The record gives the reactivity of an RNA of 177 nucleotides to DMS and 2A3.
The 2A3 profile rests on 7,039 reads.
The data come from the RNA Mapping Database (RMDB), library OK2TST.
The reactions ran in a buffer of 150 mM KOAc, 10 mM MgCl2 and 150 mM bicine (pH 8.5), at 24 C.
RNA sequence: GGGAACGACUCGAGUAGAGUCGAAAAUUCUGAAUAGACUCCGCACCCAUGGCGCCAGUGAAGUAUUCGCCAUAACGGUCGACCAAUUCACGAUAGAGAUUUUCGUCAACGAUCAGCUGCUUGGGAAUAUAGGAUAUGGUUUCGACCAUAUCCUAUAAAAAGAAACAACAACAACAAC
Reactivity to DMS in 0.01 (KOAc 150mM, MgCl2 10mM, bicine 150mM(pH8.5), 24C), signal-to-noise 8, nucleotides 027 to 126: u000u010c030u010g010a080a100u000a100g000a080c060u010c020c040g010c110a100c040c050c050a080u010g010g020c040g010c090c100a080g000u000g000a040a080g010u010a170u000u000c030g020c020c020a080u000a080a120c180g010g000u010c020g000a060c110c050a070a110u000u000c040a020c060g000a110u010a070g000a170g000a080u000u000u010u000c040g000u000c100a050a080c110g010a050u000c060a070g010c030u000g010c040u000u000g000g000g010a090a120
Reactivity to 2A3 in 0.01 (KOAc 150mM, MgCl2 10mM, bicine 150mM(pH8.5), 24C), signal-to-noise 5, nucleotides 027 to 126: u010u000c010u030g080a070a070u080a090g040a050c010u020c020c020g020c030a060c020c010c000a040u040g040g000c020g010c020c040a040g040u020g060a060a020g030u130a080u060u050c020g000c000c000a020u050a110a040c090g010g050u090c030g030a030c000c040a030a040u060u030c020a010c060g040a050u100a080g130a010g060a080u050u050u070u120c050g040u030c020a070a030c050g020a040u040c020a010g040c000u070g000c020u040u050g070g000g000a090a010